[RMDB]
RNA sequence: GGGAACGACUCGAGUAGAGUCGAAAAGAAAUUACGUUUCCUUUACACUUCUCAAACCGGGAUCAACAGAAGCAAAGCAUCCCUCAUAUCCACGAUGGAGGGUGUCGUGGAGUAUACUGUACCAAAAAGAGCGAACACGGCUUCGGCCGUGUUCGAACUUCAAUCUAACGUUCGCGUUAGAUUGAAGAAAAGAAACAACAACAACAAC
Reactivity to DMS in 0.01 (KOAc 150mM, MgCl2 10mM, bicine 150mM(pH8.5), 24C), signal-to-noise 1, nucleotides 027 to 156: g000a080a060a010u000u000a090c110g000u000u000u000c020c020u000u000u020a100c020a100c040u000u000c010u000c020a100a160a120c070c030g010g000g010a110u000c080a110a180c080a120g000a070a100g000c060a070a070a070g000c070a090u000c000c000c020u010c050a080u000a080u010c010c030a150c060g020a030u020g040g030a090g000g000g000u000g020u010c010g000u000g000g000a090g000u000a060u000a040c000u000g000u000a170c050c040a030a050a080a040a090g010a130g040c010g000a000a010c010a030c000g010g000c000u000u000c300g030g000c000c020g000u000g000u000u000c020g020a010a050
Reactivity to 2A3 in 0.01 (KOAc 150mM, MgCl2 10mM, bicine 150mM(pH8.5), 24C), signal-to-noise 5, nucleotides 027 to 156: g030a010a080a020u220u100a050c070g010u030u020u030c010c000u040u060u070a060c080a030c020u150u090c060u060c070a130a160a090c060c070g010g000g020a030u040c050a050a110c040a120g080a180a010g080c090a080a070a010g030c010a040u020c010c020c000u020c010a100u120a030u030c010c010a000c020g010a000u030g070g070a030g040g020g020u050g000u010c020g000u010g010g000a000g010u010a020u010a050c080u060g080u130a090c010c090a010a070a060a060a050g130a040g080c010g000a010a000c000a000c010g000g000c000u040u050c130g060g000c010c010g000u000g010u000u000c000g000a000a000